[RMDB]
RNA sequence: GGGAACGACUCGAGUAGAGUCGAAAAGGGAAUGGUGGUUUACCCCGUUAUCAAAUGAUUACCGACCAAUAAUUGGCGAAACUCGUUUCGCGUUGGCUGCCUAAUUCAAGGGAUUAGCGUGCCUUCAAAGACAUCAAGAAGUUCGCUUCUUGAUGAAGGAGACUUUAAAGUUCGCUUUAAAGUCUCCAAAAGAAACAACAACAACAAC
Reactivity to DMS in 0.01 (KOAc 150mM, MgCl2 10mM, bicine 150mM(pH8.5), 24C), signal-to-noise 2, nucleotides 027 to 156: g020g020g010a080a040u000g020g030u000g000g030u010u000u000a080c010c000c010c040g040u000u000a070u000c120a050a100a140u000g010a070u010u000a060c000c010g010a060c030c020a040a090u010a120a120u020u000g010g040c010g000a020a040a040c020u000c140g020u000u010u000c020g060c030g010u000u000g010g030c010u000g020c110c010u000a030a070u000u000c090a090a130g050g000g020a090u010u000a070g010c070g040u000g010c000c000u000u000c040a060a130a090g000a130c010a020u000c000a020a020g000a030a020g030u010u000c300g000c020u000u000c000u010u000g010a010u000g000a060a130
Reactivity to 2A3 in 0.01 (KOAc 150mM, MgCl2 10mM, bicine 150mM(pH8.5), 24C), signal-to-noise 5, nucleotides 027 to 156: g020g000g010a110a050u110g010g020u020g020g070u060u070u190a120c030c020c010c010g100u100u110a120u120c070a060a090a150u170g030a030u040u110a020c000c030g050a060c020c030a020a030u160a150a070u110u140g070g000c030g010a030a010a020c080u060c090g080u000u030u010c030g000c010g000u010u020g010g000c020u080g040c050c010u020a020a030u070u020c080a140a170g150g020g000a010u000u030a010g010c020g030u030g000c000c000u040u010c030a110a120a020g050a060c010a010u000c000a000a000g000a010a000g010u030u120c170g040c140u010u000c000u000u000g000a000u000g000a000a020

This 207-nucleotide RNA was probed chemically with DMS and 2A3. 2A3 adducts were read by reverse transcription with SuperScript II with manganese. The data come from the RNA Mapping Database (RMDB), library M2RFPK. The 2A3 profile rests on 2,837 reads. DMS adducts were read by reverse transcription with MarathonRT.